[RMDB]
RNA sequence: GGGAACGACUCGAGUAGAGUCGAAAAAGAGAGAAAUAGGGAGAUAUUCUGGGCCAAAGUGAUGUAUCUGCCUUCAGUCAUGGGCGGACCCGGGAUAGCAAAUUGCUUCAACCUCACACAACGAGGUGAAUAUUCUACGGUUCGCCGUAGAAUAUUCAAAAGAAACAACAACAACAAC
Reactivity to DMS in 0.01 (KOAc 150mM, MgCl2 10mM, bicine 150mM(pH8.5), 24C), signal-to-noise 3, nucleotides 027 to 126: a060g010a090g010a120g010a050a060a090u000a070g000g000g010a150g010a070u000a030u000u000c030u010g010g000g020c040c040a020a100a170g040u000g000a090u010g020u010a110u000c050u000g000c050c020u010u000c080a100g020u010c080a050u010g010g000g000c070g020g000a060c000c010c020g030g000g010a040u000a020g020c120a050a050a150u000u000g010c030u000u000c080a120a170c010c000u000c000a180c150a080c300a080a110c200g000a040g010g010u000
Reactivity to 2A3 in 0.01 (KOAc 150mM, MgCl2 10mM, bicine 150mM(pH8.5), 24C), signal-to-noise 2, nucleotides 027 to 126: a010g070a000g010a000g010a000a140a020u140a090g050g000g010a040g000a030u020a010u030u060c040u050g010g000g080c020c030a080a060a010g110u090g050a060u080g070u070a070u080c040u060g050c000c000u020u090c060a080g090u050c010a100u090g010g000g020c020g030g020a090c010c000c010g030g020g010a000u030a010g010c010a010a060a190u110u090g000c010u030u060c030a040a040c010c000u020c010a060c010a010c000a120a110c080g000a010g000g040u020